RNA sequence: GGGAACGACUCGAGUAGAGUCGAAAACUACAUAGUUUCGACUAUGUAGAAACCAUUAGGAAGCAUGCAGAUGCAUAUGGACGAGGGCAACUAACCUAUAGCGAACAGCAGGUUUCGACCUGCUGAAAGAGUAGAAUACGUUCGCGUAUUCUACUCUAAAAGAAACAACAACAACAAC
Reactivity to DMS in 0.01 (KOAc 150mM, MgCl2 10mM, bicine 150mM(pH8.5), 24C), signal-to-noise 5, nucleotides 027 to 126: c000u000a010c000a000u000a000g000u000u000u010c190g010a050c000u000a000u000g000u010a000g010a060a090a140c030c010a120u010u010a060g020g010a130a100g010c050a020u000g010c070a070g020a080u000g010c060a060u000a040u010g000g010a110c060g020a070g000g000g010c050a050a070c060u000a080a080c040c020u000a080u000a070g000c090g010a070a200c010a010g000c000a010g020g000u000u000u020c170g000a010c000c010u000g010c000u000g000a010a060
Reactivity to 2A3 in 0.01 (KOAc 150mM, MgCl2 10mM, bicine 150mM(pH8.5), 24C), signal-to-noise 4, nucleotides 027 to 126: c010u000a000c000a000u010a000g000u010u030u090c170g050a010c000u000a000u000g000u010a000g000a030a010a000c010c010a040u070u100a060g130g040a120a030g020c060a010u060g000c070a030g030a300u080g010c030a030u050a100u200g050g010a030c060g040a070g010g010g030c040a060a020c030u080a030a030c020c020u090a080u120a170g130c090g090a080a020c000a010g010c000a000g000g000u020u000u070c040g040a020c000c010u010g000c000u000g000a010a010